Description:
Source: RMDB library RFMREP, as collected in RNAgym. This 177-nucleotide RNA was probed chemically with DMS and 2A3. Reactivities are given for positions 27 through 126. Conditions: 150 mM KOAc, 10 mM MgCl2 and 150 mM bicine (pH 8.5), 24 C. For 2A3 the reverse transcriptase was SuperScript II with manganese.
[RMDB]
RNA sequence: GGGAACGACUCGAGUAGAGUCGAAAAAGUACGAUUAUGGUUAGGUAGGUACCCAAAUAUCUUGAUUAUAAUUUUCCUUUAGGAACUUACACAGAUAUUUCUGUACCUACAGGAAUUGUCUAUUGCCCUAAAGAUUUCAGUUCGCUGAAAUCUUUAGAAAAGAAACAACAACAACAAC
Reactivity to DMS in 0.01 (KOAc 150mM, MgCl2 10mM, bicine 150mM(pH8.5), 24C), signal-to-noise 3, nucleotides 027 to 126: a050g010u010a040c090g000a020u000u000a060u020g010g010u010u020a070g010g020u000a010g010g000u000a020c000c020c040a020a030a020u000a000u010c000u010u010g000a140u010u010a120u000a030a040u000u000u010u000c010c010u010u010u000a150g020g010a030a020c300u000u000a030c140a040c100a010g010a020u000a020u000u000u000c010u000g010u000a010c010c000u000a000c000a030g010g010a040a030u000u000g000u000c020u000a090u010u010g000c020c010
Reactivity to 2A3 in 0.01 (KOAc 150mM, MgCl2 10mM, bicine 150mM(pH8.5), 24C), signal-to-noise 2, nucleotides 027 to 126: a000g050u040a010c030g030a000u040u060a080u290g170g030u080u080a090g110g030u010a010g000g000u020a010c020c020c000a000a030a000u000a000u000c020u030u130g010a080u120u260a080u060a220a080u030u070u090u050c010c000u090u220u210a080g000g000a010a040c010u070u080a000c030a000c000a040g030a000u010a040u010u010u000c020u020g000u000a000c000c000u000a000c000a000g000g050a010a030u030u020g000u000c000u050a090u060u140g070c010c000